[RMDB]
RNA sequence: GGGAACGACUCGAGUAGAGUCGAAAAUGGAAGAGAAGCCGGAAAUGGCGGAACAUCUGGCGGCGGUUAAGGCCUAUCGCGAAGAGUUCGGCGUUUAAAGAAACUCGCCGGAUGAAAAGUCAUCCGGACUUAUAUCACCCUUCGGGGUGAUAUAAGUAAAAGAAACAACAACAACAAC
Reactivity to 2A3 in 0.01 (KOAc 150mM, MgCl2 10mM, bicine 150mM(pH8.5), 24C), signal-to-noise 1, nucleotides 027 to 126: u060g030g000a110a000g020a040g010a150a020g060c000c010g010g040a070a090a070u060g020g000c020g010g040a030a020c000a000u010c000u010g010g020c000g000g090c070g030g010u090u070a060a000g050g000c030c000u040a060u040c040g060c110g110a170a110g050a060g060u090u110c080g040g000c040g000u070u010u050a080a130a090g050a120a130a030c030u030c000g000c000c000g000g000a000u010g000a000a160a000a080g070u030c000a030u000c000c000g030g000
Reactivity to DMS in 0.01 (KOAc 150mM, MgCl2 10mM, bicine 150mM(pH8.5), 24C), signal-to-noise 4, nucleotides 027 to 126: u010g020g010a080a080g000a110g000a110a140g020c010c010g010g020a050a060a090u000g010g020c010g000g010a300a130c020a020u000c020u000g000g010c020g010g030c190g010g010u010u000a040a090g010g000c020c030u000a070u000c040g020c110g020a130a120g010a040g010u000u000c160g000g020c020g010u010u000u010a030a090a130g000a160a090a060c070u000c040g010c010c000g010g010a010u000g000a040a070a160a240g000u000c000a020u010c010c000g000g010
Structure probing data (2A3 and DMS) for a 177-nucleotide construct. It was measured as part of the RMDB library OK2TRN. Conditions: 150 mM KOAc, 10 mM MgCl2 and 150 mM bicine (pH 8.5), 24 C. For 2A3, 1,053 sequencing reads were counted.